[RMDB]
The record gives the reactivity of an RNA of 177 nucleotides to 2A3 and DMS.
The RNA was probed in 150 mM KOAc, 10 mM MgCl2 and 150 mM bicine (pH 8.5) at 24 C.
The 2A3 profile rests on 4,139 reads.
For 2A3 the reverse transcriptase was SuperScript II with manganese.
Source: RMDB library OK2TST, as collected in RNAgym.
RNA sequence: GGGAACGACUCGAGUAGAGUCGAAAAUGACUCUGAUAGUAGCUAUCAUUCUGCUUGUGGCGCACUACAUGUACUUGAUCCCAGGCCUACAAGCGGCAGCAGCGCGUGCUGCCCAGAAAAGGACAGCGUAGUCGUCUUAAUUCGUUAAGACGACUACAAAAGAAACAACAACAACAAC
Reactivity to 2A3 in 0.01 (KOAc 150mM, MgCl2 10mM, bicine 150mM(pH8.5), 24C), signal-to-noise 3, nucleotides 027 to 126: u080g030a040c030u010c050u090g050a060u030a070g100u080a020g060c050u040a020u160c020a050u080u060c030u060g060c030u020u070g010u030g040g020c080g020c060a040c050u100a040c010a070u110g030u070a080c050u050u090g030a020u020c010c000c010a020g040g030c000c010u070a060c040a070a000g000c020g020g010c000a010g000c000a010g020c050g050c050g180u040g010c010u010g030c000c000c000a070g090a030a090a000a010g060g020a020c040a030g040c040
Reactivity to DMS in 0.01 (KOAc 150mM, MgCl2 10mM, bicine 150mM(pH8.5), 24C), signal-to-noise 4, nucleotides 027 to 126: u020g000a070c040u000c080u000g010a080u010a060g030u010a100g010c070u000a060u000c050a120u010u000c040u000g000c040u000u000g030u000g010g010c120g000c050a080c050u010a090c120a070u000g010u000a040c090u000u020g010a130u010c010c020c030a130g010g000c020c010u010a080c080a040a070g020c090g010g010c080a020g010c020a060g020c170g020c130g000u010g000c000u000g000c000c010c030a080g000a040a040a110a060g000g000a060c100a090g010c160